[RMDB]
RNA sequence: GGGAACGACUCGAGUAGAGUCGAAAAUGACUGGCGCGGGUCCGACCACGUUCCGGCGGCGAUACGUGGUGUCUAAUGUACCAUAGCACCCCAACUACCCAGGGAAGUUUCAGCAGACGACGCCGAGACACAUAACUGAGUUCGCUCAGUUAUGUGUAAAAGAAACAACAACAACAAC
Reactivity to DMS in 0.01 (KOAc 150mM, MgCl2 10mM, bicine 150mM(pH8.5), 24C), signal-to-noise 6, nucleotides 027 to 126: u030g010a070c040u000g000g000c030g010c020g000g010g030u010c040c040g010a300c020c030a080c060g000u010u010c010c020g000g020c060g020g010c070g010a080u030a040c040g020u020g000g010u000g000u030c080u010a040a070u020g010u010a070c070c060a100u020a050g000c030a120c050c000c010c030a100a100c130u010a080c060c010c010a120g030g000g010a070a090g010u000u010u020c060a100g010c050a130g000a080c060g000a130c020g000c000c010g000a120g010
Reactivity to 2A3 in 0.01 (KOAc 150mM, MgCl2 10mM, bicine 150mM(pH8.5), 24C), signal-to-noise 9, nucleotides 027 to 126: u190g020a010c030u050g020g030c020g000c010g040g030g010u010c020c020g040a040c000c010a030c020g020u060u030c050c010g060g010c020g020g000c050g040a050u050a150c050g030u040g010g020u030g030u020c030u090a120a100u170g060u120a060c020c020a040u070a040g010c010a060c010c020c000c000a020a060c020u120a080c000c000c020a010g000g020g020a080a060g020u030u060u110c060a050g010c020a010g020a090c060g010a010c010g010c000c010g000a030g020

Background: The record gives the reactivity of an RNA of 177 nucleotides to DMS and 2A3. Conditions: 150 mM KOAc, 10 mM MgCl2 and 150 mM bicine (pH 8.5), 24 C. It was measured as part of the RMDB library OK1LIB. For DMS the reverse transcriptase was MarathonRT.